[RMDB]
RNA sequence: GGGAACGACUCGAGUAGAGUCGAAAAGAUAUGGACGCAUGACAGAAGGAGGAGUUCGGAAACGAACUUCCUCCAUCAGUGAGAUACUGUAUGCGUCCUAAGUCAAAUCUGCAUGUUCGCAUGCAGAGAGUAUAAGCAUCUUCGGAUGCUUAUACUCAAAAGAAACAACAACAACAAC
Reactivity to DMS in 0.01 (KOAc 150mM, MgCl2 10mM, bicine 150mM(pH8.5), 24C), signal-to-noise 6, nucleotides 027 to 126: g000a020u000a010u010g010g000a020c000g010c010a000u000g010a040c010a010g010a150a190g030g010a020g010g000a060g020u000u000c000g010g010a000a010a030c000g010a020a010c000u000u000c000c000u000c000c010a050u000c070a180g020u010g010a210g000a270u000a240c010u000g010u000a010u000g000c000g000u000c000c000u000a000a070g000u000c010a070a110a290u000c000u000g010c000a000u000g010u010u010c270g030c010a010u000g000c000a000g000a030
Reactivity to 2A3 in 0.01 (KOAc 150mM, MgCl2 10mM, bicine 150mM(pH8.5), 24C), signal-to-noise 9, nucleotides 027 to 126: g010a000u010a000u040g000g000a000c000g060c010a010u130g200a270c010a030g230a300a300g160g000a000g010g000a010g000u000u000c010g000g000a010a000a000c000g000a000a010c000u110u030c000c000u000c000c000a000u000c000a000g150u120g240a300g020a100u140a170c000u000g000u010a000u000g000c000g000u000c000c000u000a000a000g000u000c000a000a020a220u020c000u000g020c000a000u010g040u060u110c300g000c180a010u010g000c010a000g020a010

Chemical mapping of a 177-nucleotide RNA with DMS and 2A3. Conditions: 150 mM KOAc, 10 mM MgCl2 and 150 mM bicine (pH 8.5), 24 C. The data come from the RNA Mapping Database (RMDB), library TTRDES.